Structure probing data (DMS and 2A3) for a 177-nucleotide construct. DMS adducts were read by reverse transcription with MarathonRT. The DMS profile rests on 1,444 reads. High 2A3 reactivity points to a flexible backbone, as in loops and unpaired stretches. The RNA was probed in 150 mM KOAc, 10 mM MgCl2 and 150 mM bicine (pH 8.5) at 24 C.
[RMDB]
RNA sequence: GGGAACGACUCGAGUAGAGUCGAAAAAUCUAUUCGGAUAAACCGAAUAACUCGUCGUAGUCAAGCAUUGCUUGAGGUGGCACAGGGAAGAGCUGUGGUGGCUCAGUUCGUAAAGCUACACCUGGAGACAUUUGACCUCCUUCGGGAGGUCAAAUGUAAAAGAAACAACAACAACAAC
Reactivity to DMS in 0.01 (KOAc 150mM, MgCl2 10mM, bicine 150mM(pH8.5), 24C), signal-to-noise 1, nucleotides 027 to 126: a060u050c110u000a010u000u000c000g000g000a300u040a110a160a110c060c000g000a000a000u000a040a180c070u010c140g000u010c090g000u000a040g000u000c010a010a120g000c080a090u010u020g020c010u030u000g060a000g000g040u000g000g080c030a050c200a110g000g000g000a060a010g000a070g000c010u050g010u000g000g090u020g010g010c010u000c070a050g010u010u040c080g000u010a130a030a090g000c010u000a070c000a080c040c040u040g020g010a110g030
Reactivity to 2A3 in 0.01 (KOAc 150mM, MgCl2 10mM, bicine 150mM(pH8.5), 24C), signal-to-noise 1, nucleotides 027 to 126: a000u070c030u040a010u000u010c000g000g010a000u240a170a120a130c030c030g000a000a010u030a040a040c020u030c050g050u000c080g080u040a020g050u000c000a000a090g050c080a250u000u260g000c030u000u000g000a090g000g120u070g020g010c040a000c000a050g030g000g100a100a000g000a070g000c000u000g000u000g030g090u020g060g050c000u060c000a080g000u000u080c060g050u120a000a000a150g000c000u030a040c020a000c000c000u040g060g000a100g000